[RMDB]
RNA sequence: GGGAACGACUCGAGUAGAGUCGAAAAUGGCCGCGGUCACCACGGCUGGGCUGCGCUCCCGGUUGGCGGGACACGACUUGCCGAUCAUCGAUGUCGUCGAUGCUUUAGCGGCAUAUCCGGGCACGCCUCGGGGGAUCGCAUUCGUGCGAUCCCCCGAAAAAGAAACAACAACAACAAC
Reactivity to 2A3 in 0.01 (KOAc 150mM, MgCl2 10mM, bicine 150mM(pH8.5), 24C), signal-to-noise 1, nucleotides 027 to 126: u090g000g090c030c000g090c050g030g000u030c000a010c150c010a010c060g050g000c000u020g020g000g000c000u120g010c040g000c080u000c040c000c000g010g030u080u170g020g110c120g000g090g000a030c010a010c130g080a010c020u070u040g080c030c000g010a060u180c030a000u010c010g060a030u060g190u280c030g050u000c000g030a000u000g040c010u200u170u150a130g000c040g000g030c000a000u000a010u020c000c030g000g010g020c020a000c060g020c000c030